Structure probing data (DMS and 2A3) for a 177-nucleotide construct. The 2A3 profile rests on 6,263 reads. For 2A3 the reverse transcriptase was SuperScript II with manganese. It was measured as part of the RMDB library OK1LIB.

[RMDB]
RNA sequence: GGGAACGACUCGAGUAGAGUCGAAAAGAGUCAGAGAGUCAGUACGUGUAGCGAACGACAGGUGCCAACUACACAUAUGGGAGCCAGUGGCGUUCACCUAGGUAUCUUGGUUGGCGAAUGGGCCGGCCCAACUUUGAAACUUCGGUUUCAAAGUUGGAAAAGAAACAACAACAACAAC
Reactivity to DMS in 0.01 (KOAc 150mM, MgCl2 10mM, bicine 150mM(pH8.5), 24C), signal-to-noise 5, nucleotides 027 to 126: g010a100g000u010c030a010g010a110g000a050g010u010c040a090g020u030a060c100g000u010g000u000a050g010c080g010a080a080c080g000a070c110a070g010g020u020g010c040c010a030a090c050u010a100c120a020c100a080u030a060u010g010g000g010a130g010c030c020a110g000u020g000g010c080g030u010u020c040a050c020c020u010a060g000g010u010a050u020c090u010u020g010g000u000u010g010g010c030g000a040a060u010g010g000g020c050c020g000g000c110
Reactivity to 2A3 in 0.01 (KOAc 150mM, MgCl2 10mM, bicine 150mM(pH8.5), 24C), signal-to-noise 7, nucleotides 027 to 126: g060a000g060u060c060a010g040a010g010a010g100u030c040a010g040u040a050c110g010u040g050u080a030g040c030g060a060a050c030g100a030c050a050g040g040u070g040c010c010a040a030c040u110a040c060a010c010a060u120a110u180g050g010g000a020g030c010c020a090g040u060g110g010c070g000u050u050c010a080c030c000u030a050g000g050u130a090u110c030u060u110g050g010u030u030g010g020c020g020a080a070u140g010g050g000c010c000g020g020c000